Source: RMDB library OK3TST, as collected in RNAgym.
This 207-nucleotide RNA was probed chemically with 2A3.
Values are in units of 0.01, from 0 to 300, in steps of 10.
The reactions ran in a buffer of 150 mM KOAc, 10 mM MgCl2 and 150 mM bicine (pH 8.5), at 24 C.
RNA sequence: GGGAACGACUCGAGUAGAGUCGAAAAGUGACAGUGCCAAGGACACCUUCCACUCAGUUAUCAUCGUGGGUGGAUGGAAAGUCAUCGCUGUAAGUCUUGGCCUCCGCUUCGUGAUCUGGAGCAAAGACGCGCACUAAUCAUUUCCUAGGCUGCCCUGUCGAUGAGUGUACUUCGGUACACUCAUCGAAAAAGAAACAACAACAACAAC
Reactivity to 2A3 in 0.01 (KOAc 150mM, MgCl2 10mM, bicine 150mM(pH8.5), 24C), signal-to-noise 2, nucleotides 027 to 156: g020u030g010a020c010a000g000u030g100c100c110a130a060g040g000a030c080a220c060c020u000u000c010c000a000c010u020c000a050g030u050u190a190u190c120a110u110c120g140u040g000g000g000u020g000g000a000u030g000g050a060a070a050g010u020c000a020u140c100g010c040u090g010u060a110a000g020u020c020u070u060g020g040c050c010u010c000c000g010c000u030u110c110g070u110g130a280u000c080u220g030g070a090g070c060a060a060a030g010a000c010g000c010g000c010a010c010u060a110a040u040c060a060u030u020u050c000c000u020a080g020g000c000u060g040c000c000c010u050g060